[RMDB]
RNA sequence: GGGAACGACUCGAGUAGAGUCGAAAACUUACCUGGAGAGAGGAUCCCCGGGGCAACUCUUUCCAGAAUCCAGGGGGCUCCGAGCGCAACGGGCCGCGGUGCUCUGGAGUAGAGGCUCUGCCCUCGACAUAUAAUCUCGGUUCGCCGAGAUUAUAUGAAAAGAAACAACAACAACAAC
Reactivity to 2A3 in 0.01 (KOAc 150mM, MgCl2 10mM, bicine 150mM(pH8.5), 24C), signal-to-noise 1, nucleotides 027 to 126: c020u040u050a100c010c000u050g010g000a040g000a000g000a020g070g050a140u030c030c010c000c010g110g000g050g000c050a050a070c020u000c000u000u000u040c000c000a010g040a040a050u050c030c000a040g000g010g050g040g000c030u030c030c020g050a030g040c080g000c030a100a150c030g070g030g020c010c020g020c030g020g050u050g000c000u000c050u110g020g000a010g000u030a030g000a040g030g000c030u050c080u190g030c030c000c000u000c010g000a000
Reactivity to DMS in 0.01 (KOAc 150mM, MgCl2 10mM, bicine 150mM(pH8.5), 24C), signal-to-noise 2, nucleotides 027 to 126: c130u010u010a100c080c020u000g000g010a050g000a030g010a060g000g010a180u000c030c010c000c140g000g000g010g000c040a050a180c010u000c000u000u000u000c000c010a030g010a090a070u000c050c030a050g010g000g000g010g000c010u010c020c010g010a100g020c060g020c080a120a080c110g010g000g000c040c040g010c160g000g000u000g000c040u000c000u010g020g000a050g010u000a040g010a050g000g010c110u020c120u000g000c050c000c000u000c060g010a250